[RMDB]
Conditions: 150 mM KOAc, 10 mM MgCl2 and 150 mM bicine (pH 8.5), 24 C.
Structure probing data (2A3 and DMS) for a 177-nucleotide construct.
RNA sequence: GGGAACGACUCGAGUAGAGUCGAAAAGAUAUAGAAUACCAGAAUGUAUUCUGGGUCUACUUACAGUAUAUAGAAAAACUGUAUAAAGACCUUACAGGACACAUGCUUGACAGUUAUUCUGUCAUGCGUAAAUAUUUUUGUUCGCAAAAAUAUUUACAAAAGAAACAACAACAACAAC
Reactivity to 2A3 in 0.01 (KOAc 150mM, MgCl2 10mM, bicine 150mM(pH8.5), 24C), signal-to-noise 1, nucleotides 027 to 126: g000a000u100a000u040a210g050a090a020u050a100c030c030a090g100a240a090u110g000u030a010u020u040c010u020g030g010g000u020c010u010a090c060u010u010a020c000a000g040u000a050u050a000u110a300g150a050a140a000a000a000c000u010g040u010a010u010a020a060a000g000a000c000c000u000u060a030c030a010g020g100a030c030a020c000a060u150g000c000u000u020g000a000c000a000g000u070u070a180u250u120c020u010g000u000c010a000u010g000c010
Reactivity to DMS in 0.01 (KOAc 150mM, MgCl2 10mM, bicine 150mM(pH8.5), 24C), signal-to-noise 2, nucleotides 027 to 126: g000a130u000a210u000a020g020a090a070u020a060c030c110a210g000a190a030u000g020u000a060u010u000c010u020g010g000g000u000c000u000a070c300u000u000a000c000a000g010u000a030u010a300u020a090g000a080a050a150a050a030c000u000g000u000a010u010a130a160a060g000a010c000c010u000u000a160c050a070g000g010a020c070a020c070a020u000g030c000u000u000g000a020c000a020g010u000u020a100u020u000c010u000g020u000c010a000u010g000c030

For 2A3 the reverse transcriptase was SuperScript II with manganese. The DMS profile rests on 950 reads. For 2A3, 1,009 sequencing reads were counted. Reactivities are given for positions 27 through 126.